[RMDB]
RNA sequence: GGGAACGACUCGAGUAGAGUCGAAAAGCCUCUAGCGUUUGCAAAACGCUGUUUGGGCAAUGAUCUGGAUUUAGCGCAAGUAGGUCCGAAAUCCAGAUCAACAUUUCGGACAACCGCGCUAAUUAAAGACAGUUUGAAUUUUCGAAUUCAAACUGUCAAAAGAAACAACAACAACAAC
Reactivity to 2A3 in 0.01 (KOAc 150mM, MgCl2 10mM, bicine 150mM(pH8.5), 24C), signal-to-noise 2, nucleotides 027 to 126: g000c000c020u010c080u090a000g010c000g010u020u030u270g130c070a110a180a020a020c020g000c010u000g050u030u170u060g010g000g000c020a010a070u150g040a060u040c040u070g120g060a100u010u000u060a020g000c000g000c010a090a130g060u070a070g090g110u000c010c010g020a010a020a000u030c080c040a020g020a100u070c010a010a020c000a000u020u020u010c000g000g000a000c000a040a030c040c030g010c000g010c000u010a020a010u100u030a050a060a010
Reactivity to DMS in 0.01 (KOAc 150mM, MgCl2 10mM, bicine 150mM(pH8.5), 24C), signal-to-noise 4, nucleotides 027 to 126: g000c000c000u000c300u010a020g020c000g010u000u010u000g010c300a110a080a020a010c010g010c000u000g010u010u000u000g010g020g010c010a090a100u010g010a130u000c030u000g000g010a190u000u000u000a010g010c000g020c000a080a130g040u010a120g010g010u010c010c010g010a010a010a010u000c120c140a120g020a100u010c140a040a060c160a040u000u000u000c010g010g000a010c010a080a060c170c120g010c000g010c000u000a000a020u000u000a060a120a130
Structure probing data (2A3 and DMS) for a 177-nucleotide construct. Conditions: 150 mM KOAc, 10 mM MgCl2 and 150 mM bicine (pH 8.5), 24 C. For 2A3, 3,729 sequencing reads were counted. For 2A3 the reverse transcriptase was SuperScript II with manganese. Reactivities are given for positions 27 through 126.